[RMDB]
RNA sequence: GGGAACGACUCGAGUAGAGUCGAAAAUACAGAUAUGUACUAUAUGCCUACACAAAUAUAUGUUCUCAAAGCCACUUAUUAGAGACACAUUGCAGUUCACUUCAAUUACACUUAUUCUCAAACCCAUGGAUGCAUGUGACAUCUCUGAGUAAAGAGAGUCAUCCGGCAUGUUCGCAUGCCGGAUGACAAAAGAAACAACAACAACAAC
Reactivity to 2A3 in 0.01 (KOAc 150mM, MgCl2 10mM, bicine 150mM(pH8.5), 24C), signal-to-noise 1, nucleotides 027 to 156: u180a000c010a000g050a090u180a030u060g040u010a070c080u070a070u040a070u150g000c000c020u090a000c020a040c040a070a080a000u180a000u040a040u200g010u080u020c000u000c000a140a000a000g070c010c050a040c020u020u040a040u080u140a110g020a020g000a000c010a000c000a050u090u160g000c020a010g020u020u020c000a020c040u180u110c050a040a120u100u090a030c080a000c020u220u120a060u130u020c050u000c000a090a240a250c000c000c000a040u080g070g000a080u050g000c000a000u060g030u050g000a000c000a120u000c000u000c000u000g050a070g140u300a060a210a000g030a010g010a010

Conditions: 150 mM KOAc, 10 mM MgCl2 and 150 mM bicine (pH 8.5), 24 C.
Structure probing data (2A3) for a 207-nucleotide construct.
For 2A3 the reverse transcriptase was SuperScript II with manganese.